Description:
An RNA of 177 nucleotides, treated with DMS and 2A3 and read out base by base. For 2A3, 1,602 sequencing reads were counted. In probing experiments dimethyl sulfate is read out at A N1 and C N3, which are open when not base-paired.
RNA sequence: GGGAACGACUCGAGUAGAGUCGAAAACAAAUGAUCGUACAAGAAUAAGCCGGUACGAAUCAUCCACGCCGGGCGCAGAUGGGGCUGAUGGGGCAGGCGAAAGCGCAUUGGGAAAGCGAUAUGAGGAGAAUGUAAAGGGGUUCGCCCCUUUACAUUCAAAAGAAACAACAACAACAAC
Reactivity to DMS in 0.01 (KOAc 150mM, MgCl2 10mM, bicine 150mM(pH8.5), 24C), signal-to-noise 3, nucleotides 027 to 126: c120a090a140a060u000g010a050u000c020g000u000a010c030a080a100g010a130a110u010a080a130g030c140c180g000g010u000a000c000g010a060a070u000c030a020u000c050c040a080c140g020c050c050g020g010g000c090g000c060a050g010a090u000g010g000g000g010c080u000g020a050u000g000g000g010g030c050a030g000g010c050g000a040a050a060g020c060g010c030a040u000u020g010g000g000a080a060a080g000c060g020a070u000a070u010g010a070g000g010a220
Reactivity to 2A3 in 0.01 (KOAc 150mM, MgCl2 10mM, bicine 150mM(pH8.5), 24C), signal-to-noise 1, nucleotides 027 to 126: c060a000a100a030u040g000a030u050c010g010u010a010c020a090a090g100a100a260u130a190a000g130c050c050g020g000u000a000c010g010a010a110u010c000a010u020c050c010a030c060g050c020c010g020g020g000c060g000c020a010g040a080u060g070g000g010g000c040u080g010a120u060g040g000g000g040c000a020g020g000c020g020a070a000a010g030c010g000c020a020u040u040g010g000g040a030a010a060g050c080g030a020u010a090u240g070a030g070g010a090